[RMDB]
RNA sequence: GGGAACGACUCGAGUAGAGUCGAAAACUGUCUCAGACAGUGACAGAGACUCUGACUGUCUGAGUGACACUCACUCUGUGUCUCACUGACACAGUGACAGUGUCUGAGUGUCAGACUCUGUCACUGACUCGUAAAGUGUGUUCGCACACUUUACGAGAAAAGAAACAACAACAACAAC
Reactivity to DMS in 0.01 (KOAc 150mM, MgCl2 10mM, bicine 150mM(pH8.5), 24C), signal-to-noise 5, nucleotides 027 to 126: c160u010g000u000c030u000c060a150g020a180c000a000g010u000g000a040c010a000g000a040g000a160c210u000c010u010g010a040c000u000g020u020c070u000g010a100g010u010g000a030c030a020c010u010c190a230c100u010c030u000g020u000g000u000c000u000c300a120c280u000g000a030c030a040c000a010g000u000g000a110c230a020g000u000g010u000c010u000g000a090g010u010g010u000c000a030g000a070c010u000c000u000g010u000c010a010c010u000g000a100
Reactivity to 2A3 in 0.01 (KOAc 150mM, MgCl2 10mM, bicine 150mM(pH8.5), 24C), signal-to-noise 5, nucleotides 027 to 126: c040u050g060u090c010u010c050a060g040a120c000a010g010u010g010a000c020a000g040a010g020a070c100u000c010u060g010a020c010u090g080u260c040u060g100a030g080u070g000a000c000a000c000u030c000a050c010u060c020u030g010u010g010u010c030u030c100a190c160u160g000a000c000a010c000a010g000u000g020a020c060a050g000u000g000u010c020u030g060a040g070u090g020u020c000a000g010a020c000u000c000u000g000u000c000a000c000u010g010a010
An RNA of 177 nucleotides, treated with DMS and 2A3 and read out base by base. 2A3 adducts were read by reverse transcription with SuperScript II with manganese. The RNA was probed in 150 mM KOAc, 10 mM MgCl2 and 150 mM bicine (pH 8.5) at 24 C.